[RMDB]
RNA sequence: GGGAACGACUCGAGUAGAGUCGAAAACAGUGAUGGAAACAUCACUGAAAAACGUGGGAGCGCCACACGAAAAAGUCGAUCGAAUACCGAUCGACAAGCGCUAAAGUCAUGCCGAAAGGCAUGACAAGGAGUAUUAGUGCUUCGGCACUAAUACUCCAAAAGAAACAACAACAACAAC
Reactivity to DMS in 0.01 (KOAc 150mM, MgCl2 10mM, bicine 150mM(pH8.5), 24C), signal-to-noise 2, nucleotides 027 to 126: c000a020g090u000g010a000u000g000g000a280a060a120c000a000u000c000a000c020u000g000a050a020a020a050a200c040g010u000g000g000g000a060g020c000g010c010c300a130c000a000c030g000a070a100a040a030a000g000u000c000g030a000u030c010g000a300a240u010a200c280c000g010a000u000c000g000a040c010a060a050g040c020g000c000u000a040a120a100g000u000c000a030u000g000c010c000g000a100a050a120g000g000c000a060u000g000a010c000a010a040
Reactivity to 2A3 in 0.01 (KOAc 150mM, MgCl2 10mM, bicine 150mM(pH8.5), 24C), signal-to-noise 4, nucleotides 027 to 126: c010a010g000u000g000a000u000g000g030a050a010a030c000a000u000c000a000c000u000g000a060a020a000a010a000c010g000u000g000g000g020a060g010c010g000c020c020a050c010a010c060g230a100a050a030a010a000g010u000c000g000a010u000c000g000a070a060u140a300c090c020g000a010u000c000g000a000c000a000a000g000c010g000c020u020a130a000a020g000u000c000a000u000g000c000c010g060a080a040a030g010g000c010a000u000g000a010c000a000a040

Structure probing data (DMS and 2A3) for a 177-nucleotide construct.
The reactions ran in a buffer of 150 mM KOAc, 10 mM MgCl2 and 150 mM bicine (pH 8.5), at 24 C.
For DMS the reverse transcriptase was MarathonRT.
For DMS, 2,042 sequencing reads were counted.
Source: RMDB library OK1LIB, as collected in RNAgym.